[RMDB]
RNA sequence: GGGAACGACUCGAGUAGAGUCGAAAAGGGGCGGCUGUAGCAGGCCCCGGGCCGCGAGCUGAUGCGCAUCGAGUUUUGGACGAUCACGUUGUCCGCGGCGACCGGCACGCACGUGGAGACGGCCAUCUGUUAAGAACCGGUUCGCCGGUUCUUAACAAAAAGAAACAACAACAACAAC
Reactivity to DMS in 0.01 (KOAc 150mM, MgCl2 10mM, bicine 150mM(pH8.5), 24C), signal-to-noise 2, nucleotides 027 to 126: g010g000g000g030c030g000g030c000u000g040u070a110g000c060a090g000g030c020c010c020c000g000g000g050c000c040g020c050g000a170g010c060u000g000a080u000g000c040g000c140a030u020c050g000a100g000u000u000u010u010g000g020a070c000g020a060u000c170a120c130g000u000u030g000u000c010c000g000c060g000g020c040g000a160c070c010g000g000c060a110c030g030c040a020c030g030u000g000g000a160g000a080c060g000g000c050c070a070u020c060
Reactivity to 2A3 in 0.01 (KOAc 150mM, MgCl2 10mM, bicine 150mM(pH8.5), 24C), signal-to-noise 2, nucleotides 027 to 126: g030g000g000g000c050g000g070c070u170g050u200a070g050c090a050g000g120c000c000c000c000g000g060g020c000c020g000c010g020a010g040c050u110g050a100u070g050c040g030c060a070u020c050g100a130g040u040u090u170u160g100g030a040c040g010a040u060c010a010c130g030u070u110g110u030c010c020g000c000g010g010c010g040a060c000c010g010g030c030a020c030g060c010a130c040g020u060g000g040a040g010a020c030g000g020c000c000a040u080c030